Overview: The data come from the RNA Mapping Database (RMDB), library OK2TST. An RNA of 177 nucleotides, treated with 2A3 and DMS and read out base by base. The DMS profile rests on 2,061 reads.
[RMDB]
RNA sequence: GGGAACGACUCGAGUAGAGUCGAAAAUGCCAGCUAUUACGCUGGACGGUCACCAGGUAGAAGUAUGCGCUAACAUUGGUACGGUUCGUGACGUUGAAGGUGCAGAGCGUAACGGCGCUGAAGGCGACUAAUCAGGGCCGUUCGCGGCCCUGAUUAGAAAAGAAACAACAACAACAAC
Reactivity to 2A3 in 0.01 (KOAc 150mM, MgCl2 10mM, bicine 150mM(pH8.5), 24C), signal-to-noise 1, nucleotides 027 to 126: u070g030c010c010a000g000c040u120a060u300u100a030c050g040c000u020g000g010a020c020g000g000u050c000a020c050c030a090g000g090u110a030g050a100a020g080u150a110u120g050c010g000c000u080a070a040c030a040u070u200g030g060u090a030c050g000g110u060u160c070g010u080g060a010c030g020u050u150g120a150a040g050g010u010g050c050a060g000a000g110c000g010u050a050a000c010g050g000c040g020c130u030g050a010a020g060g050c050g010a020
Reactivity to DMS in 0.01 (KOAc 150mM, MgCl2 10mM, bicine 150mM(pH8.5), 24C), signal-to-noise 2, nucleotides 027 to 126: u000g020c000c000a060g020c010u000a140u000u000a050c230g000c000u000g010g020a020c050g030g010u000c050a100c040c000a070g010g050u000a050g000a080a140g010u010a090u000g000c070g020c030u000a050a200c080a120u010u010g010g010u000a050c080g010g010u010u000c100g000u010g010a050c070g020u000u010g010a050a090g020g020u000g000c020a050g010a080g010c020g000u000a050a080c040g010g000c030g010c060u000g000a050a050g020g020c040g010a150